[RMDB]
Chemical mapping of a 177-nucleotide RNA with 2A3 and DMS. The reactions ran in a buffer of 150 mM KOAc, 10 mM MgCl2 and 150 mM bicine (pH 8.5), at 24 C.
RNA sequence: GGGAACGACUCGAGUAGAGUCGAAAAGAUAUGGAGAUGUCGGGAGAGCGAAGUGUCGGAAACGACAUUAGCUCGAGGAUCGAGCAUCUCCUAAGUCAAAAGCACUCCCACUUCGGUGGGAGUGCAAGAGACUUAUUACGUUCGCGUAAUAAGUCUCAAAAGAAACAACAACAACAAC
Reactivity to 2A3 in 0.01 (KOAc 150mM, MgCl2 10mM, bicine 150mM(pH8.5), 24C), signal-to-noise 3, nucleotides 027 to 126: g010a020u040a020u090g010g010a010g000a000u010g010u030c010g000g000g000a050g000a000g020c000g030a110a040g060u020g010u040c010g020g030a060a040a020c000g010a000c010a040u280u110a010g000c010u000c010g000a050g000g000a020u020c010g000a080g120c000a000u000c000u020c000c000u010a070a010g010u010c030a080a060a060a030g010c000a000c000u000c000c020c000a000c000u070u110c300g120g000u000g000g000g000a000g000u000g000c000a000a010
Reactivity to DMS in 0.01 (KOAc 150mM, MgCl2 10mM, bicine 150mM(pH8.5), 24C), signal-to-noise 4, nucleotides 027 to 126: g000a030u000a300u010g010g000a010g020a010u000g010u000c010g000g000g000a040g000a010g010c000g010a110a210g000u000g000u000c000g010g000a080a050a160c000g010a010c000a010u000u010a300g010c000u000c000g010a060g000g000a020u000c000g000a050g000c010a000u000c010u000c000c000u000a000a060g020u000c030a050a110a110a140g000c000a010c000u000c000c000c010a010c010u000u010c200g010g020u000g000g000g000a000g000u000g000c010a000a020

Source: RMDB library TTRDEL, as collected in RNAgym.